[RMDB]
RNA sequence: GGGAACGACUCGAGUAGAGUCGAAAAUUGGCCAAGCUGGCAAAACAGGCACAAAAUCCGAUGCUGGUUUAUUUAUUGGAAAUGGCGCAGGAGGAGGCGCGAGACUCCAUAGAGCAGGUUACUGCCACUGCAUUAGCAUCUUCGGAUGCUAAUGCAGAAAAGAAACAACAACAACAAC
Reactivity to DMS in 0.01 (KOAc 150mM, MgCl2 10mM, bicine 150mM(pH8.5), 24C), signal-to-noise 2, nucleotides 027 to 126: u010u000g030g020c020c040a120a100g000c070u020g000g010c100a040a030a060a060c180a100g000g000c050a090c070a070a090a140a150u000c030c030g020a060u000g000c010u000g010g010u000u000u010a030u000u000u000a130u000u020g050g000a080a070a180u000g000g020c040g040c070a070g010g020a070g020g000a090g000g030c040g010c050g000a090g000a070c030u000c030c000a060u000a040g010a140g040c030a030g010g000u020u000a040c110u000g000c030c060a110
Reactivity to 2A3 in 0.01 (KOAc 150mM, MgCl2 10mM, bicine 150mM(pH8.5), 24C), signal-to-noise 1, nucleotides 027 to 126: u040u070g040g000c010c010a000a000g010c040u040g020g000c000a000a000a050a080c040a070g010g000c040a010c060a060a050a040a130u050c060c020g020a020u050g000c010u020g060g170u000u090u060a080u060u150u060a160u090u050g040g020a010a040a060u080g030g000c020g000c020a000g020g000a030g000g030a010g010g040c020g000c000g060a030g030a050c060u050c030c000a020u030a050g040a050g010c070a000g030g000u090u070a070c000u040g000c010c030a040